[RMDB]
RNA sequence: GGGAACGACUCGAGUAGAGUCGAAAAACGUCAUCACGGAUGUCAGGAAUGAUGAGUUUAAGAGCGGCACUGUCGGAAUGGUAUACCUGGGUAACGAGGAGCUCGUCGUCCUGUCUUGGCAGCGCAAGCUGCAUGCUCGGUUCGCCGAGCAUGCAGCAAAAGAAACAACAACAACAAC
Reactivity to DMS in 0.01 (KOAc 150mM, MgCl2 10mM, bicine 150mM(pH8.5), 24C), signal-to-noise 3, nucleotides 027 to 126: a060c040g020u010c030a060u000c080a090c090g000g010a090u000g020u000c090a040g030g000a080a060u010g020a030u000g000a060g010u000u000u000a090a130g010a130g020c080g020g020c050a080c060u000g000u000c070g030g040a100a080u000g020g010u010a070u010a070c060c010u000g000g000g000u000a040a080c070g000a060g000g000a120g010c010u000c040g020u000c030g000u000c010c000u000g010u010c040u000u000g010g010c030a070g010c070g020c150a100a110
Reactivity to 2A3 in 0.01 (KOAc 150mM, MgCl2 10mM, bicine 150mM(pH8.5), 24C), signal-to-noise 3, nucleotides 027 to 126: a000c010g070u010c010a020u030c020a030c100g050g050a050u140g090u120c040a030g050g080a130a070u070g040a020u020g010a010g030u030u070u040a200a070g040a040g050c010g050g000c040a010c120u080g030u070c060g000g110a130a050u120g020g050u080a060u050a180c030c010u050g110g000g010u060a070a020c050g020a040g090g010a020g000c010u010c050g000u000c000g030u000c000c020u020g070u040c020u070u100g030g000c010a030g070c070g010c070a060a030